[RMDB]
RNA sequence: GGGAACGACUCGAGUAGAGUCGAAAACUAACAAUCAACGGCGCGGCAGCAAUCGUUGAACUUCCUUUGCUGCAUCGGCAAGGGCGUCUUCCGGCGUGGCGGACUGUUCGACAACGCGCGAAAGAUAAGGCAUGGUAUCAUUCGUGAUACCAUGCCUAAAAGAAACAACAACAACAAC
Reactivity to DMS in 0.01 (KOAc 150mM, MgCl2 10mM, bicine 150mM(pH8.5), 24C), signal-to-noise 1, nucleotides 027 to 126: c010u000a120a080c180a040a090u000c070a060a230c200g020g000c020g010c050g000g030c080a130g000c250a080a010u000c120g000u000u000g000a010a040c080u040u000c010c000u000u010u020g010c000u000g010c030a090u030c030g000g060c200a000a080g010g060g000c200g040u000c010u000u010c000c030g020g010c100g000u000g000g010c000g000g010a070c130u000g020u000u000c090g000a000c020a090a070c000g010c000g020c000g020a010a040a150g000a020u040a030
Reactivity to 2A3 in 0.01 (KOAc 150mM, MgCl2 10mM, bicine 150mM(pH8.5), 24C), signal-to-noise 1, nucleotides 027 to 126: c000u050a060a030c030a110a090u120c050a000a080c060g180g000c000g010c000g100g010c050a050g010c010a080a180u090c080g040u000u010g010a010a020c010u050u050c010c010u040u030u100g000c000u030g020c020a020u040c000g000g000c040a010a010g030g110g090c140g130u040c000u000u010c010c000g060g000c060g060u000g010g000c010g000g040a030c140u080g030u030u010c010g000a010c030a070a000c040g000c000g000c000g000a070a050a000g050a020u120a050